[RMDB]
RNA sequence: GGGAACGACUCGAGUAGAGUCGAAAAGCCUCCUCGCUUCCAUAGAAACGGGACGGGGCAGAUCGCAAGUGCUACAACCGAGCGGUGGUAUCUGUCAAACUAAGCAGCCACUGCACAUCAAUUGACUAAACGAUGCCGAUCUUCGGAUCGGCAUCAACAAGACAAAAAGGUUCGCCUUUUUGUCUUGAAAAGAAACAACAACAACAAC
Reactivity to 2A3 in 0.01 (KOAc 150mM, MgCl2 10mM, bicine 150mM(pH8.5), 24C), signal-to-noise 2, nucleotides 027 to 156: g030c000c010u030c040c000u040c000g010c090u030u010c030c000a090u060a150g260a090a160a010c090g000g000g000a000c000g010g000g000g040c000a000g000a010u030c000g000c020a030a030g000u020g030c000u060a270c040a130a020c120c050g100a030g040c000g050g000u000g000g000u000a020u020c000u030g090u140c060a020a060a110c100u140a110a010g000c000a000g000c010c000a000c000u000g080c020a000c000a050u180c090a120a180u100u220g050a100c040u200a120a080a130c070g010a000u000g000c010c000g000a000u040c010u060u020c180g020g000a000u000c000g000g000c000a000u000c000a000a000
Reactivity to DMS in 0.01 (KOAc 150mM, MgCl2 10mM, bicine 150mM(pH8.5), 24C), signal-to-noise 2, nucleotides 027 to 156: g000c010c000u000c010c010u000c000g050c010u000u010c020c170a220u000a200g020a040a080a040c030g000g020g010a060c060g020g000g040g000c040a010g000a120u000c030g000c040a070a080g010u040g020c030u000a090c040a050a300c060c040g010a120g080c010g020g040u000g020g090u010a030u010c070u010g020u010c000a080a060a300c110u000a050a060g010c020a050g020c000c000a050c010u000g000c100a100c050a120u010c050a040a130u000u010g010a110c090u010a030a060a140c110g000a010u010g040c080c010g020a020u010c020u010u010c300g060g030a000u000c010g010g000c000a000u010c010a000a130
An RNA of 207 nucleotides, treated with 2A3 and DMS and read out base by base.
Values cover nucleotides 27 to 156.
It was measured as part of the RMDB library M2RFPK.
The DMS profile rests on 1,926 reads.
For 2A3 the reverse transcriptase was SuperScript II with manganese.